[RMDB]
RNA sequence: GGGAACGACUCGAGUAGAGUCGAAAACGCCUUGUUAUUCAGCAGGUAGACACAACUCCAUGUGUGUCUCAAUUGAAGAACGGGGCUAGAAGAGCAACAGGUUGUGCUUUCCUCACUGUAACACCCACCAUUAGAGAGUUUUCGAACUCUCUAAUGGAAAAGAAACAACAACAACAAC
Reactivity to DMS in 0.01 (KOAc 150mM, MgCl2 10mM, bicine 150mM(pH8.5), 24C), signal-to-noise 9, nucleotides 027 to 126: c220g010c000c010u000u010g010u000u000a050u000u000c010a020g020c240a090g020g010u040a010g000a020c000a000c000a010a050c050u060c230c300a110u020g010u000g010u000g010u000c010u000c030a120a080u020u000g000a010a010g000a020a020c010g000g000g000g000c010u000a040g010a080a080g000a050g010c030a050a060c070a110g010g010u010u010g010u000g010c030u000u000u000c020c010u000c100a070c120u010g000u010a080a110c130a110c010c030c040a230
Reactivity to 2A3 in 0.01 (KOAc 150mM, MgCl2 10mM, bicine 150mM(pH8.5), 24C), signal-to-noise 9, nucleotides 027 to 126: c050g000c000c000u000u010g010u000u020a030u020u000c010a030g020c030a050g160g180u200a000g020a000c000a000c000a060a140c040u090c110c110a160u290g020u010g000u000g010u030c010u010c010a080a130u080u030g010a010a000g000a030a000c000g000g010g010g000c010u010a020g040a130a020g020a010g040c030a020a060c040a080g080g060u120u100g040u100g050c010u030u030u020c000c000u050c020a070c060u070g040u100a070a010c010a060c050c010c000a040